Description
An RNA of 177 nucleotides, treated with 2A3 and read out base by base. The 2A3 profile rests on 777 reads. Source: RMDB library OK1LIB, as collected in RNAgym. Values are in units of 0.01, from 0 to 300, in steps of 10.
RNA sequence: GGGAACGACUCGAGUAGAGUCGAAAAGAUUGAUGGAAUUUGGAUUUUCUCUUUCAAUCAAAAUUUCCGCAUCUCUGUUUGUACCAUUUCCAUAACCCCUGAUUUGCCUCACUCUGAAAUCAAACGACCCCGUCGUAGAUUUCGAUCUACGACGGGGAAAAGAAACAACAACAACAAC
Reactivity to 2A3 in 0.01 (KOAc 150mM, MgCl2 10mM, bicine 150mM(pH8.5), 24C), signal-to-noise 2, nucleotides 027 to 126: g040a000u060u150g000a020u050g000g070a040a010u070u160u190g150g060a180u060u030u220u060c040u040c000u040u170u080c020a020a010u010c010a060a020a110a150u060u030u010c020c030g040c050a110u020c050u010c030u070g080u110u130u090g030u070a050c020c070a080u070u030u020c050c070a110u040a150a120c030c000c000c030u020g080a170u030u030u120g000c000c000u000c010a040c010u030c020u010g030a050a190a000u080c050a060a030a120c040g120a100